[RMDB]
The data come from the RNA Mapping Database (RMDB), library OK3TST. Chemical mapping of a 207-nucleotide RNA with 2A3. For 2A3, 676 sequencing reads were counted. Conditions: 150 mM KOAc, 10 mM MgCl2 and 150 mM bicine (pH 8.5), 24 C.

RNA sequence: GGGAACGACUCGAGUAGAGUCGAAAAUGUGUCUGUGGGGGCUGCUACUUGGGAAAGUCCACCAGGAGGAGAGCAUGCCAAUCUCUCCUCUCAGAUCCUCUGGGGGUUACUUUCCCCACCCAAACUAGGCCUUGAUGUCAAGGCCUAGUUACAGGGACGGAGUACUGGUAUUCGUACCAGUACUCCGAAAAGAAACAACAACAACAAC
Reactivity to 2A3 in 0.01 (KOAc 150mM, MgCl2 10mM, bicine 150mM(pH8.5), 24C), signal-to-noise 1, nucleotides 027 to 156: u140g000u030g030u020c030u000g050u070g060g000g000g010g030c000u030g020c010u050a100c040u100u080g020g010g010a010a040a000g020u050c020c000a000c010c000a000g010g010a000g020g010a000g000a000g020c170a110u240g130c110c070a130a180u000c000u000c000u010c010c000u000c000u000c010a020g000a090u050c010c040u080c050u010g000g000g040g010g010u080u080a020c000u020u000u020c060c000c000c000a100c000c010c030a020a000a000c000u000a000g000g000c010c010u140u040g100a300u280g300u300c020a000a000g000g000c000c000u000a000g000u000u000a000c030a010g010g020g000a000